[RMDB]
Structure probing data (DMS and 2A3) for a 177-nucleotide construct. For 2A3 the reverse transcriptase was SuperScript II with manganese. DMS adducts were read by reverse transcription with MarathonRT. For DMS, 2,106 sequencing reads were counted. The reactions ran in a buffer of 150 mM KOAc, 10 mM MgCl2 and 150 mM bicine (pH 8.5), at 24 C. For 2A3, 1,493 sequencing reads were counted.

RNA sequence: GGGAACGACUCGAGUAGAGUCGAAAACGACGAACGUCGACUUGCCGGCGCCGUUGGGCCCGGCGACCAGAUCGAGCCGCUUCACGCGUGGCGCGUUGUCUUCGAGCUGGCGAUCACGGCGUGGCCGCUCGAAUCUGCACUUCGGUGCAGAUUCGAGAAAAGAAACAACAACAACAAC
Reactivity to DMS in 0.01 (KOAc 150mM, MgCl2 10mM, bicine 150mM(pH8.5), 24C), signal-to-noise 1, nucleotides 027 to 126: c040g000a100c070g030a090a120c190g000u000c020g000a130c270u020u000g000c000c000g010g000c270g050c030c000g060u030u070g010g020g010c000c010c000g000g000c000g000a030c070c010a100g000a070u030c000g040a000g030c040c170g000c040u030u020c020a010c000g000c030g000u000g000g000c000g000c020g050u070u010g000u010c000u030u010c070g010a030g020c000u000g000g000c000g000a050u000c030a040c040g000g020c050g000u000g010g020c000c150g000
Reactivity to 2A3 in 0.01 (KOAc 150mM, MgCl2 10mM, bicine 150mM(pH8.5), 24C), signal-to-noise 3, nucleotides 027 to 126: c030g050a000c020g030a300a080c110g010u010c000g000a050c080u050u150g020c000c000g030g020c090g010c060c040g190u300u180g070g060g000c000c000c000g000g000c030g000a020c010c010a010g000a040u040c020g020a010g060c030c020g050c020u180u150c040a030c020g070c000g070u080g060g000c030g000c020g080u160u160g050u040c030u090u100c100g010a020g020c010u030g080g030c030g040a030u080c040a020c020g030g010c030g000u000g020g030c030c010g010